Source: RMDB library TTRDES, as collected in RNAgym.
The record gives the reactivity of an RNA of 177 nucleotides to DMS and 2A3.
Reactivities are given for positions 27 through 126.
The reactions ran in a buffer of 150 mM KOAc, 10 mM MgCl2 and 150 mM bicine (pH 8.5), at 24 C.
For DMS the reverse transcriptase was MarathonRT.
RNA sequence: GGGAACGACUCGAGUAGAGUCGAAAAAAAAGAUAUGGAUCGUGAACUACAGCGAAACGAAGCGUUGAAAGUAAAUCGGAAACGAUUUACUGGAGCUUCUGAGUAGCUGCACGAUCCUAAGUCAAAACAUUUAAUACUUCUUCGGAAGUAUUAAAUGAAAAGAAACAACAACAACAAC
Reactivity to DMS in 0.01 (KOAc 150mM, MgCl2 10mM, bicine 150mM(pH8.5), 24C), signal-to-noise 5, nucleotides 027 to 126: a060a060a090a090g010a020u010a240u010g000g000a000u000c000g010u010g000a080a030c080u020a300c010a000g010c010g000a180a200a170c300g000a020a010g030c010g000u000u020g000a130a130a030g000u000a000a000a000u000c010g000g000a040a030a070c000g000a020u000u000u000a010c000u010g000g000a030g010c000u000u000c000u000g000a040g000u000a120g000c000u000g000c010a000c000g000a010u000c000c000u000a010a070g000u000c020a120a070a090a190
Reactivity to 2A3 in 0.01 (KOAc 150mM, MgCl2 10mM, bicine 150mM(pH8.5), 24C), signal-to-noise 2, nucleotides 027 to 126: a010a000a010a020g030a030u070a020u080g000g000a000u010c010g000u010g020a080a050c080u240a080c300a000g000c000g040a020a010a000c020g000a000a000g020c010g300u300u060g000a010a020a000g000u000a000a010a000u010c010g020g000a020a040a030c000g010a010u020u000u000a010c010u000g000g010a020g000c010u010u010c000u010g000a000g010u000a000g000c000u000g000c000a000c000g000a000u010c000c000u000a010a010g020u010c000a000a000a110a150